This 177-nucleotide RNA was probed chemically with 2A3 and DMS.
DMS (dimethyl sulfate) methylates the pairing face of unpaired adenines and cytosines.
For DMS the reverse transcriptase was MarathonRT.
The RNA was probed in 150 mM KOAc, 10 mM MgCl2 and 150 mM bicine (pH 8.5) at 24 C.
RNA sequence: GGGAACGACUCGAGUAGAGUCGAAAAUGCUUAUGGGACGCUGAGCGGUCCGAUUAUGCAGACUGUGUCUGAAGAUCCCCUCCUUAAACAUUCUCAAACACCUGAAGAUUCUCCGUUCUUGCCGUGCCUUGCAACAGACUUUCGAGUCUGUUGCAAGAAAAGAAACAACAACAACAAC
Reactivity to 2A3 in 0.01 (KOAc 150mM, MgCl2 10mM, bicine 150mM(pH8.5), 24C), signal-to-noise 6, nucleotides 027 to 126: u100g010c010u090u080a050u080g050g010g020a010c040g020c080u110g050a050g060c050g010g020u020c010c000g050a080u100u080a080u300g030c010a010g020a040c040u110g080u050g050u110c030u060g050a110a030g030a170u070c030c000c000c000u060c000c010u020u030a050a050a020c050a120u100u040c070u010c050a060a100a050c030a050c030c020u060g050a070a010g030a150u040u010c020u010c020c000g050u110u030c000u050u050g030c060c020g030u040g000c010
Reactivity to DMS in 0.01 (KOAc 150mM, MgCl2 10mM, bicine 150mM(pH8.5), 24C), signal-to-noise 2, nucleotides 027 to 126: u000g000c030u000u000a050u000g000g020g010a110c000g010c040u040g020a110g040c020g010g000u030c070c010g030a120u030u010a090u000g040c000a000g000a060c020u030g020u020g000u000c020u000g000a110a060g020a110u010c000c000c020c020u000c000c000u040u010a050a130a190c090a030u000u000c030u000c050a110a040a110c120a030c020c010u030g000a050a040g000a130u010u000c000u010c010c000g030u000u000c030u020u000g040c070c010g010u010g020c060